Chemical mapping of a 177-nucleotide RNA with 2A3 and DMS. It was measured as part of the RMDB library M2PK50. For DMS, 1,369 sequencing reads were counted. For 2A3, 1,402 sequencing reads were counted. In probing experiments dimethyl sulfate is read out at A N1 and C N3, which are open when not base-paired. Reactivities are rounded to 0.1 and cut off at 0 and 3.

[RMDB]
RNA sequence: GGGAACGACUCGAGUAGAGUCGAAAAGCAUACAACUUCGGUUGUAUGCAACGACAGAGUUGACUGUCUUAAACAACGUAACAUGUGAGUUACAAUAACACAUUGCAGCAGCUUUCGAGCUGCUGAAUGCUCUUGAACCAUUCGUGGUUCAAGAGCAAAAAGAAACAACAACAACAAC
Reactivity to 2A3 in 0.01 (KOAc 150mM, MgCl2 10mM, bicine 150mM(pH8.5), 24C), signal-to-noise 2, nucleotides 027 to 126: g000c000a000u010a030c000a000a020c000u010u070c220g120g010u010u000g000u010a000u000g030c010a000a010c070g000a000c010a000g020a000g020u020u000g120a250c010u020g010u060c080u020u180a100a090a010c060a060a000c010g060u110a030a020c020a070u070g150u070g300a090g070u090u050a010c030a010a080u180a090a020c030a000c010a020u020u240g000c010a010g000c010a000g000c000u070u040u270c300g040a000g000c000u000g000c000u000g000a000a010
Reactivity to DMS in 0.01 (KOAc 150mM, MgCl2 10mM, bicine 150mM(pH8.5), 24C), signal-to-noise 2, nucleotides 027 to 126: g020c000a000u000a000c000a020a000c000u000u010c200g000g020u010u000g000u010a000u000g030c000a030a070c100g000a020c010a010g010a070g000u000u000g000a150c000u000g000u010c010u000u020a060a120a140c120a080a020c140g000u010a080a140c110a070u010g000u000g000a070g000u000u010a050c050a060a060u010a120a040c080a020c040a070u010u000g000c000a000g000c000a000g010c010u000u000u000c190g000a010g000c000u000g000c000u010g010a030a060